[RMDB]
An RNA of 177 nucleotides, treated with DMS and read out base by base. For DMS the reverse transcriptase was MarathonRT. The reactions ran in a buffer of 150 mM KOAc, 10 mM MgCl2 and 150 mM bicine (pH 8.5), at 24 C.

RNA sequence: GGGAACGACUCGAGUAGAGUCGAAAAAGUUUGUGCGUAAAGACGCGUCUCCUCUCCAGAAGCUUGUUUUUCGUUUUGGCGAUCAGUUGCGCGCUUCAACAUGGGGCUGUACACCCUUAUGGUCACCUACACCUUCGAAUUUCGAUUCGAAGGUGUAAAAAGAAACAACAACAACAAC
Reactivity to DMS in 0.01 (KOAc 150mM, MgCl2 10mM, bicine 150mM(pH8.5), 24C), signal-to-noise 2, nucleotides 027 to 126: a070g010u000u000u010g020u000g010c020g010u000a050a100a100g010a110c050g000c040g000u010c030u000c030c000u000c040u010c030c030a100g000a040a080g010c110u010u000g000u010u010u010u000u000c070g010u010u010u000u000g010g010c030g000a060u000c070a080g010u000u000g020c120g010c060g020c010u010u000c030a030a050c050a090u000g010g010g010g020c030u000g000u000a050c130a110c020c010c030u000u000a060u010g010g000u000c040a090c060c050